[RMDB]
RNA sequence: GGGAACGACUCGAGUAGAGUCGAAAAGAUAUGGAGUGAGCGUGCUUUUGACGUGUCUGGGUCGGAAACGACCCUGACACGAUAAGCACCCACUCCUAAGUCAAAAGCAACUGCUUCGGCAGUUGCAGAUAAUGCAUCCCUUCGGGGAUGCAUUAUCAAAAGAAACAACAACAACAAC
Reactivity to DMS in 0.01 (KOAc 150mM, MgCl2 10mM, bicine 150mM(pH8.5), 24C), signal-to-noise 2, nucleotides 027 to 126: g010a020u000a230u000g010g000a020g010u000g010a120g020c240g040u000g000c000u000u000u010u010g000a170c090g050u000g000u000c010u010g000g000g010u000c000g010g000a010a020a060c000g010a000c000c000c000u000g010a000c000a000c000g010a030u010a000a020g010c000a010c000c000c010a010c010u000c010c000u000a000a070g000u010c020a090a120a170a150g010c010a010a000c000u000g010c000u000u010c300g030g020c000a010g000u000u000g000c000a030
Reactivity to 2A3 in 0.01 (KOAc 150mM, MgCl2 10mM, bicine 150mM(pH8.5), 24C), signal-to-noise 2, nucleotides 027 to 126: g030a000u030a010u100g010g010a000g020u030g050a300g080c190g050u010g010c040u100u190u300u300g300a300c100g000u010g000u000c020u030g010g000g000u000c000g000g000a040a030a020c010g010a010c030c020c000u000g000a000c000a000c000g000a000u020a010a010g000c000a000c000c000c000a000c000u000c000c000u000a020a020g030u000c010a000a000a170a110g000c000a000a010c010u000g030c000u080u130c300g160g020c010a000g010u020u010g010c010a000